[RMDB]
RNA sequence: GGGAACGACUCGAGUAGAGUCGAAAAGUUAGUAACUGUAAGGCCAAACCCGGUGCAUUGGUCUUACCCGCUAUAUGUAAUGGGGUGUCACCCAUACGAUCAGCAAGAUUGGGAUCAACGCCCGCGACACUGAUGGACCGUUCGCGGUCCAUCAGUGAAAAGAAACAACAACAACAAC
Reactivity to 2A3 in 0.01 (KOAc 150mM, MgCl2 10mM, bicine 150mM(pH8.5), 24C), signal-to-noise 1, nucleotides 027 to 126: g090u120u070a030g030u110a110a190c080u040g020u040a030a030g000g000c030c000a080a040a030c050c130c110g020g170u170g000c080a030u000u020g000g000u000c000u000u030a010c030c000c000g090c000u070a070u030a050u250g170u170a180a100u150g000g010g000g080u050g150u100c130a070c040c000c020a010u040a070c010g040a040u190c050a010g000c100a040a050g040a190u160u190g030g000g000a000u140c010a030a050c000g030c040c030c000g040c020g030a020
Reactivity to DMS in 0.01 (KOAc 150mM, MgCl2 10mM, bicine 150mM(pH8.5), 24C), signal-to-noise 1, nucleotides 027 to 126: g010u010u020a100g010u000a060a030c050u000g030u030a020a040g000g000c000c000a000a020a100c110c050c070g000g030u030g020c090a250u000u000g040g010u000c000u000u000a000c020c140c110g000c080u000a020u000a070u010g000u020a060a090u010g000g000g030g010u020g010u000c180a120c010c000c020a030u000a060c050g000a050u000c140a100g000c060a130a070g000a160u000u000g020g000g000a060u020c090a080a090c150g000c030c000c020g040c150g010a220